Conditions: 150 mM KOAc, 10 mM MgCl2 and 150 mM bicine (pH 8.5), 24 C. The record gives the reactivity of an RNA of 177 nucleotides to 2A3 and DMS. It was measured as part of the RMDB library TTRDES. For 2A3 the reverse transcriptase was SuperScript II with manganese. For 2A3, 3,235 sequencing reads were counted. The DMS profile rests on 1,995 reads.
RNA sequence: GGGAACGACUCGAGUAGAGUCGAAAAGAUAUGGACUGGUACGCAGGCGAUAAGUCGUGGUCGGAAACGACCAUACGACUUUUGACGCCUGAAACCAGUCCUAAGUCAAAAGUAACCUUCGGGUUACCCUCCUACUAGACUUCGGUCUAGUAGGAGGAAAAGAAACAACAACAACAAC
Reactivity to 2A3 in 0.01 (KOAc 150mM, MgCl2 10mM, bicine 150mM(pH8.5), 24C), signal-to-noise 1, nucleotides 027 to 126: g000a030u030a100u190g000g000a010c000u010g010g000u090a060c300g010c080a000g040g000c080g060a060u040a160a000g000u000c010g010u000g020g000u010c000g000g020a080a050a030c000g010a000c000c010a010u150a030c030g010a010c010u020u040u060u140g130a070c070g000c010c030u020g000a000a000a000c000c000a000g000u000c000c000u010a000a020g030u000c010a060a050a010a160g030u030a000a000c000c000u030u140c300g110g000g000u010u020a010c000
Reactivity to DMS in 0.01 (KOAc 150mM, MgCl2 10mM, bicine 150mM(pH8.5), 24C), signal-to-noise 2, nucleotides 027 to 126: g000a020u010a300u000g000g010a010c000u010g000g010u000a050c290g020c000a020g000g000c010g000a150u000a030a010g020u000c000g020u000g020g000u000c010g030g010a050a110a190c010g000a010c020c000a070u000a020c010g010a000c000u000u000u020u010g030a260c120g030c000c020u010g000a000a030a020c000c010a000g020u000c000c000u000a000a040g000u010c020a050a050a080a150g010u000a010a010c000c000u000u030c200g010g020g010u010u000a000c010